[RMDB]
RNA sequence: GGGAACGACUCGAGUAGAGUCGAAAAUGGAAACCCGUUAGGCAUACCAACGCACCGCGUUCCGCGGCGCGCAGCACCGAUUUCAAGUGGUUCAGGAAGUCCAGGAGCAAUCGGAUAGGGUUGCGGUGCUGAAGUACCAGUCCAGGAUACAUGGUGAACCUCUCUUUUCAUUCGUGAAAAGAGAGGUAAAAGAAACAACAACAACAAC
Reactivity to 2A3 in 0.01 (KOAc 150mM, MgCl2 10mM, bicine 150mM(pH8.5), 24C), signal-to-noise 1, nucleotides 027 to 156: u160g030g000a040a110a000c000c000c000g060u040u080a060g050g000c040a030u000a050c000c050a070a020c010g010c000a000c010c020g030c030g070u210u100c160c070g000c020g040g000c010g000c000g000c020a010g000c000a000c000c000g010a020u040u030u060c040a060a070g040u020g110g020u120u030c050a040g070g040a060a050g060u000c050c050a060g040g000a000g020c000a000a060u060c010g080g030a140u200a030g080g020g000u000u100g000c020g030g020u030g000c000u010g000a040a000g000u010a030c040c000a010g040u070c050c030a040g110g010a030u050a160c090a130u100g010g000u080g010a060
Reactivity to DMS in 0.01 (KOAc 150mM, MgCl2 10mM, bicine 150mM(pH8.5), 24C), signal-to-noise 1, nucleotides 027 to 156: u010g020g020a040a070a090c030c020c040g010u010u000a080g050g000c050a110u010a060c040c020a110a170c080g030c000a020c000c020g040c000g000u010u020c130c180g030c010g000g060c000g030c010g030c020a090g080c040a030c000c010g000a100u010u010u020c040a080a270g010u000g000g030u000u000c090a240g020g000a060a070g060u000c030c040a110g040g000a250g000c040a060a050u010c040g030g030a190u010a200g030g010g030u010u000g010c040g000g010u000g010c010u000g010a100a060g000u000a050c030c000a080g030u000c050c060a100g000g020a150u000a040c050a100u010g010g020u000g000a180